[RMDB]
RNA sequence: GGGAACGACUCGAGUAGAGUCGAAAAUGGCUUAAUAUGCUUGGCACGUUCGUCAAGGACUGGUUUAGAUAUGAGUCACAUUUUGUUCAUGGUAGAGAUUCUCUUGUUGACAUUUUAAAAGAGCGUGUACUGUUGACAAGUUCGCUUGUCAACAGUAAAAAGAAACAACAACAACAAC
Reactivity to DMS in 0.01 (KOAc 150mM, MgCl2 10mM, bicine 150mM(pH8.5), 24C), signal-to-noise 5, nucleotides 027 to 126: u010g010g000c010u010u000a060a070u010a060u010g010c020u000u010g010g000c010a060c110g020u000u000c040g000u000c260a130a220g010g020a040c020u000g020g000u010u000u000a030g020a080u000a040u010g000a040g010u000c050a090c130a070u010u000u000u000g010u020u000c060a060u010g000g010u010a080g000a120g000a110u000u010c030u000c020u000u010g010u000u010g010a070c130a080u010u000u000u000a040a060a090a130g010a060g010c110g010u000g000
Reactivity to 2A3 in 0.01 (KOAc 150mM, MgCl2 10mM, bicine 150mM(pH8.5), 24C), signal-to-noise 1, nucleotides 027 to 126: u080g020g000c000u030u030a120a000u060a110u150g170c000u010u000g040g020c040a010c110g000u040u030c030g030u120c120a140a090g000g000a000c010u050g000g140u060u070u110a020g050a070u030a000u100g080a020g050u060c010a030c070a190u120u180u060u070g050u000u080c020a050u070g140g000u060a070g000a040g010a120u150u010c040u040c000u060u030g070u090u030g080a020c050a090u060u060u130u290a050a140a040a000g110a000g010c030g000u040g050